Structure probing data (2A3 and DMS) for a 177-nucleotide construct. The reactions ran in a buffer of 150 mM KOAc, 10 mM MgCl2 and 150 mM bicine (pH 8.5), at 24 C.
[RMDB]
RNA sequence: GGGAACGACUCGAGUAGAGUCGAAAAUAAAGAUUGUAAUCGCAUCGCCGUCUACGAUUAAAUUUUGAUGCGGUUGUAUAUUUUGUAGUAGGAAUGUAAUGGCAUUAUUUCCUUUGAAAUCAACGCCUAUUCCUAAAUCAUUCGUGAUUUAGGAAUAAAAAGAAACAACAACAACAAC
Reactivity to 2A3 in 0.01 (KOAc 150mM, MgCl2 10mM, bicine 150mM(pH8.5), 24C), signal-to-noise 9, nucleotides 027 to 126: u240a020a060a010g070a060u050u050g030u040a010a010u020c000g000c010a010u010c010g060c130c030g150u140c110u170a110c070g100a080u150u240a110a120a130u190u240u140u280g000a000u010g000c000g000g000u000u000g000u000a070u000a020u070u090u030u100g050u010a110g020u030a010g030g060a050a040u090g020u130a080a090u090g060g000c010a010u010u050a030u030u070u030c010c000u040u030u200g120a090a090a040u100c050a050a070c080g010c010c000
Reactivity to DMS in 0.01 (KOAc 150mM, MgCl2 10mM, bicine 150mM(pH8.5), 24C), signal-to-noise 9, nucleotides 027 to 126: u040a060a040a050g010a050u010u010g010u000a010a010u000c010g020c010a020u000c010g010c170c100g010u010c080u030a070c180g010a110u020u030a050a090a130u030u020u030u040g010a010u000g000c030g010g010u000u000g010u000a020u030a030u000u000u010u010g000u010a090g010u020a060g000g010a040a030u010g010u020a050a050u010g010g000c010a250u010u000a040u000u000u000c000c150u000u020u020g000a050a060a060u010c160a040a070c130g000c010c010
About this RNA:
The DMS profile rests on 28,140 reads. Values cover nucleotides 27 to 126.